Structure probing data (2A3 and DMS) for a 207-nucleotide construct.
Reactivities are rounded to 0.1 and cut off at 0 and 3.
DMS (dimethyl sulfate) methylates the pairing face of unpaired adenines and cytosines.
2A3 adducts were read by reverse transcription with SuperScript II with manganese.
For DMS the reverse transcriptase was MarathonRT.
RNA sequence: GGGAACGACUCGAGUAGAGUCGAAAAUCUCCUCUUUUGAGGAGACCUGGUGAGAGCGCUAGGAAGGGCUUUUAACGUUGCAUUGCCCCUAUACACCUUUUAACUGGUGUAUAGUUUGCCUCGUGGGCCAAUUUAAGUUUGCGUAGGAAGCAACGAAAGUAGUGUGUGGGUUCGUUUACAUGCUGCUAAAAGAAACAACAACAACAAC
Reactivity to 2A3 in 0.01 (KOAc 150mM, MgCl2 10mM, bicine 150mM(pH8.5), 24C), signal-to-noise 2, nucleotides 027 to 156: u000c000u000c010c010u000c010u030u200u090u280g000a000g000g000a000g000a000c000c010u000g000g000u030g010a210g010a020g040c030g000c010u020a000g000g020a020a030g000g000g000c000u000u030u010u120a070a010c020g000u000u000g010c010a010u000u080g000c000c010c000c000u000a000u000a000c000a000c000c000u000u070u030u110a100a050c020u010g000g000u000g000u000a000u000a000g000u000u020u080g000c000c000u010c010g000u010g000g010g010c010c030a030a030u080u050u110a090a000g000u000u000u000g000c000g010u020a010g000g000a020a030g010c010a010a000c000g010a090a000
Reactivity to DMS in 0.01 (KOAc 150mM, MgCl2 10mM, bicine 150mM(pH8.5), 24C), signal-to-noise 3, nucleotides 027 to 156: u000c000u000c000c000u010c010u010u010u000u000g020a010g010g000a020g000a010c020c020u000g040g010u010g000a090g010a110g030c030g020c040u000a080g020g000a150a100g030g000g010c030u010u000u000u010a060a120c050g020u000u010g010c020a190u010u000g000c010c010c070c010u000a010u010a010c000a000c010c000u000u000u000u010a050a150c160u000g020g020u000g010u000a010u000a010g010u000u000u000g010c010c010u000c020g000u010g010g040g010c010c040a080a100u010u010u000a070a070g000u000u000u000g020c010g020u010a070g010g000a100a120g020c020a020a060c030g010a090a100